[RMDB]
RNA sequence: GGGAACGACUCGAGUAGAGUCGAAAAUAGGUAGUAGACUUACCAUCAUCACUCACAUAAUGACCCCUUACAUAAGGAAUGGUCGCUAAGUACAACCCAUACACUAAGGGAUAGAUCAUGAAGUAACCGUUUUCAAACCAUUCGUGGUUUGAAAACGAAAAGAAACAACAACAACAAC
Reactivity to 2A3 in 0.01 (KOAc 150mM, MgCl2 10mM, bicine 150mM(pH8.5), 24C), signal-to-noise 2, nucleotides 027 to 126: u090a000g000g100u030a010g050u010a000g070a090c030u090u040a030c010c000a040u010c020a010u000c000a010c070u040c010a040c020a040u220a110a100u120g030a030c000c000c040c000u050u050a060c050a090u190a110a050g070g010a060a100u090g000g000u000c010g000c070u080a090a010g040u050a070c020a000a040c000c000c000a010u070a110c060a010c030u040a010a060g050g000g000a050u080a070g030a110u060c030a020u100g060a010a050g000u020a040a010c040
Reactivity to DMS in 0.01 (KOAc 150mM, MgCl2 10mM, bicine 150mM(pH8.5), 24C), signal-to-noise 2, nucleotides 027 to 126: u010a070g030g020u000a020g020u000a070g000a050c060u000u000a080c010c010a110u010c060a020u030c030a110c030u010c080a090c060a050u000a110a080u010g000a040c080c020c000c010u000u000a080c150a090u040a110a080g010g000a110a120u040g000g000u000c090g000c090u000a060a030g000u030a070c120a110a070c060c000c020a090u020a030c100a060c110u000a090a060g000g010g010a090u000a040g000a020u000c090a080u000g020a070a120g000u000a040a100c210